[RMDB]
RNA sequence: GGGAACGACUCGAGUAGAGUCGAAAAUGACUGGCCGCGCUGGAACAACUGUUGUUCGGUGGUGACCACCGCGUGCACGGGUGCCGUGGCGACAUCGCCGGGCUUGAGCAGCGUGUCCAUCGCCGCGGAUGCCUGCGUAUUUCGAUACGCAGGCAUCAAAAGAAACAACAACAACAAC
Reactivity to 2A3 in 0.01 (KOAc 150mM, MgCl2 10mM, bicine 150mM(pH8.5), 24C), signal-to-noise 3, nucleotides 027 to 126: u150g010a010c090u020g030g010c030c010g000c010g050c030u010g010g020a210a070c050a060a050c060u100g060u260u050g010u050u030c010g000g010u010g020g010u010g080a200c080c050a000c010c020g010c020g050u180g040c040a020c080g300g000g050u050g000c000c010g020u010g030g000c000g060a030c020a020u020c000g000c010c030g000g030g000c020u090u150g030a040g090c010a010g000c000g030u040g020u000c010c010a010u010c030g010c000c010g040c070g070
Reactivity to DMS in 0.01 (KOAc 150mM, MgCl2 10mM, bicine 150mM(pH8.5), 24C), signal-to-noise 2, nucleotides 027 to 126: u020g000a110c200u010g000g020c050c050g010c000g020c040u000g000g000a040a060c100a130a300c080u010g000u000u010g000u010u000c030g000g030u000g010g030u000g000a090c210c050a080c020c050g010c000g040u010g000c030a060c130g010g000g030u000g010c010c000g030u010g000g030c140g060a100c030a020u010c020g030c010c020g000g020g000c040u020u010g010a080g000c010a050g000c050g040u000g020u000c010c030a070u000c020g010c010c050g020c120g000